[RMDB]
RNA sequence: GGGAACGACUCGAGUAGAGUCGAAAAGACUGCGUGCACUUGAGACGAUAUCGAGCCGGAAAUUAAUCGAUAAUGUCUCUUGUAGUGGAUACGAUCCGGCAAGUAUCGACUACUUGUGCUCGUAGGACAGCCCGAUAUGAUUCGUCAUAUCGGGCUGAAAAGAAACAACAACAACAAC
Reactivity to 2A3 in 0.01 (KOAc 150mM, MgCl2 10mM, bicine 150mM(pH8.5), 24C), signal-to-noise 5, nucleotides 027 to 126: g070a000c000u000g000c010g020u020g020c000a000c000u010u040g010a000g010a000c020g030a040u010a000u090c020g000a010g010c010c000g000g090a070a150a040u300u250a090a160u120c000g000a010u030a060a070u150g040u000c010u010c010u080u090g060u030a040g040u050g120g000a000u000a000c010g010a030u010c000c000g000g000c020a050a050g000u000a000u020c020g060a010c000u060a080c000u030u040g000u000g000c000u000c000g010u010a000g000g010a010
Reactivity to DMS in 0.01 (KOAc 150mM, MgCl2 10mM, bicine 150mM(pH8.5), 24C), signal-to-noise 1, nucleotides 027 to 126: g020a060c030u000g000c020g000u010g000c020a000c000u020u000g000a020g000a030c010g080a130u010a000u000c040g020a220g010c000c000g000g000a110a190a120u030u040a120a110u000c000g010a020u010a040a160u010g000u010c000u010c060u000u020g000u040a010g000u030g000g000a000u010a020c020g000a100u040c010c010g030g000c000a080a110g000u000a000u060c050g030a010c000u000a000c050u040u060g030u000g000c000u000c000g050u000a000g000g020a220